Structure probing data (DMS and 2A3) for a 177-nucleotide construct. For DMS the reverse transcriptase was MarathonRT. For 2A3 the reverse transcriptase was SuperScript II with manganese.

[RMDB]
RNA sequence: GGGAACGACUCGAGUAGAGUCGAAAAUAUGGAUAGGGCACUAAUCUUUACUCUAUUUAGUGCAAAACUAUAAUUUCUCGUACAACAUAAAAUGUGAAGAAAAGUUAUAGUUAGAUUCAAGCAGGAGCCCGUAUUACUAGUUCGCUAGUAAUACGGGAAAAGAAACAACAACAACAAC
Reactivity to DMS in 0.01 (KOAc 150mM, MgCl2 10mM, bicine 150mM(pH8.5), 24C), signal-to-noise 3, nucleotides 027 to 126: u040a070u010g010g010a010u000a060g000g020g000c010a010c020u000a000a050u020c120u010u020u030a140c060u000c090u000a090u000u000u000a030g020u000g010c040a090a080a020a020c000u000a000u010a000a000u000u000u000c050u010c030g010u020a090c130a100a050c020a090u030a100a060a050a300u010g000u000g000a060a160g000a030a020a000a020g000u000u000a010u000a000g000u000u020a080g010a110u000u000c070a070a090g000c120a060g020g000a100g000
Reactivity to 2A3 in 0.01 (KOAc 150mM, MgCl2 10mM, bicine 150mM(pH8.5), 24C), signal-to-noise 6, nucleotides 027 to 126: u260a110u090g040g020a030u050a120g120g040g000c010a010c010u020a000a030u020c030u080u180u100a110c040u050c020u060a090u150u070u020a020g000u000g000c000a060a080a000a030c010u020a010u000a030a000u000u020u010c010u000c010g040u120a060c020a130a010c000a110u240a100a090a070a070u060g000u010g050a090a180g010a010a070a000a000g030u010u000a010u000a000g000u000u020a030g020a100u080u080c030a020a080g060c050a080g060g160a030g050